[RMDB]
Conditions: 150 mM KOAc, 10 mM MgCl2 and 150 mM bicine (pH 8.5), 24 C. This 177-nucleotide RNA was probed chemically with DMS and 2A3. It was measured as part of the RMDB libraries RFM100 and RFMREP. For 2A3 the reverse transcriptase was SuperScript II with manganese.
RNA sequence: GGGAACGACUCGAGUAGAGUCGAAAACCUAUAAUCCCUUCGCACACCGCGUCACACCGCGCUAUAUGCUGCUCAUUAGGAAUUACGGCUCCUUUUUUGUGGAUACAAUCUCUUGUAUACGAUAUACGCUUGAUGAGAGUUUCGACUCUCAUCAAGCAAAAGAAACAACAACAACAAC
Reactivity to DMS in 0.01 (KOAc 150mM, MgCl2 10mM, bicine 150mM(pH8.5), 24C), signal-to-noise 2, nucleotides 027 to 126: c000c030u010a070u050a140a100u000c030c000c010u000u000c090g000c000a060c080a050c070c050g000c090g020u000c060a070c050a080c080c010g000c040g020c050u010a060u020a070u020g020c040u000g000c020u000c050a110u010u000a020g000g000a070a060u000u030a070c120g000g010c030u010c050c010u000u000u000u000u000u000g010u010g020g010a030u040a000c020a010a030u000c080u010c060u000u000g010u010a010u030a080c100g010a070u030a070u020a110c120
Reactivity to 2A3 in 0.01 (KOAc 150mM, MgCl2 10mM, bicine 150mM(pH8.5), 24C), signal-to-noise 4, nucleotides 027 to 126: c000c000u040a040u080a060a060u110c000c020c000u020u060c040g010c020a020c010a020c030c020g010c020g020u040c000a060c010a020c050c000g040c010g000c020u040a050u010a010u240g030c020u030g000c000u010c030a080u050u120a030g050g000a030a030u070u050a050c020g040g000c020u020c010c000u060u060u000u020u060u080g130u060g050g030a020u030a080c020a040a080u050c030u000c010u080u060g010u040a030u000a060c040g010a010u020a010u020a160c070